[RMDB]
Source information
An RNA of 177 nucleotides, treated with DMS and 2A3 and read out base by base. For DMS, 919 sequencing reads were counted. For DMS the reverse transcriptase was MarathonRT.
RNA sequence: GGGAACGACUCGAGUAGAGUCGAAAAAUGUAAUCAUGUCGCCUUUUUCAAUAAUUUUAUCACUUGCAACACCAUGUGGUAAUGCACCUCUAUGACCAGAUGCUACAAUCGUAUCAAAUGAUGGUCCGACCUGAGUACCAUUCGUGGUACUCAGGUCAAAAGAAACAACAACAACAAC
Reactivity to DMS in 0.01 (KOAc 150mM, MgCl2 10mM, bicine 150mM(pH8.5), 24C), signal-to-noise 1, nucleotides 027 to 126: a040u030g000u010a070a090u000c060a060u010g000u020c030g010c040c020u000u040u000u000u000c050a090a060u000a080a080u000u000u000u000a060u000c020a020c000u000u000g020c100a080a090c250a170c270c030a030u000g000u010g010g010u000a090a040u000g030c090a070c050c020u000c060u000a120u000g020a020c060c020a050g000a120u000g020c040u000a040c070a030a050u010c120g000u000a020u010c030a000a180a050u010g020a090u010g010g000u000c040c190
Reactivity to 2A3 in 0.01 (KOAc 150mM, MgCl2 10mM, bicine 150mM(pH8.5), 24C), signal-to-noise 2, nucleotides 027 to 126: a000u100g050u090a050a020u120c030a020u060g090u120c050g030c020c040u100u070u050u080u060c050a090a100u100a180a110u010u060u120u100a070u050c000a000c020u020u090g020c090a210a070c010a060c080c040a060u080g010u040g070g000u040a030a050u090g030c040a030c000c050u080c010u100a110u130g000a020c000c000a030g010a060u050g010c040u040a100c040a210a040u190c100g000u020a010u050c040a000a020a160u250g060a070u100g040g010u020c010c040